[RMDB]
Chemical mapping of a 177-nucleotide RNA with DMS and 2A3. The RNA was probed in 150 mM KOAc, 10 mM MgCl2 and 150 mM bicine (pH 8.5) at 24 C. DMS adducts were read by reverse transcription with MarathonRT. Source: RMDB library OK2TRN, as collected in RNAgym. The 2A3 profile rests on 1,063 reads.
RNA sequence: GGGAACGACUCGAGUAGAGUCGAAAAGCAUACUUCCAACUUGGAGUAGAAACUGCCAACCGUCAACAGGGAUCAGUGGACAAAGCAAUGGCAGCAGAGCUAGGCCUCACAGAAGAUGAGAAGCGGGGUUAGUACUAGCCUUCGGGCUAGUACUAACAAAAGAAACAACAACAACAAC
Reactivity to DMS in 0.01 (KOAc 150mM, MgCl2 10mM, bicine 150mM(pH8.5), 24C), signal-to-noise 2, nucleotides 027 to 126: g020c080a150u000a050c050u000u000c030c040a120a200c250u010u000g000g000a040g010u000a020g010a110a070a130c070u000g000c030c060a070a130c110c020g000u010c040a020a070c060a030g020g000g010a090u000c100a080g020u000g000g050a080c060a110a120a050g000c020a090a090u010g010g000c030a070g000c030a040g000a080g000c030u000a150g000g030c060c000u010c040a040c080a120g000a100a070g000a050u010g000a050g010a050a090g000c060g000g000g000
Reactivity to 2A3 in 0.01 (KOAc 150mM, MgCl2 10mM, bicine 150mM(pH8.5), 24C), signal-to-noise 2, nucleotides 027 to 126: g000c010a030u000a080c030u120u070c040c020a100a150c250u080u190g030g040a030g000u080a030g010a060a080a000c000u060g000c000c000a090a100c080c030g010u080c020a030a070c020a100g030g000g120a130u120c020a030g040u030g050g000a010c010a060a070a030g080c040a020a100u040g030g000c000a020g040c040a010g030a010g120c010u030a030g050g060c000c030u070c030a070c010a020g150a200a040g040a210u100g020a030g030a110a020g040c060g000g090g010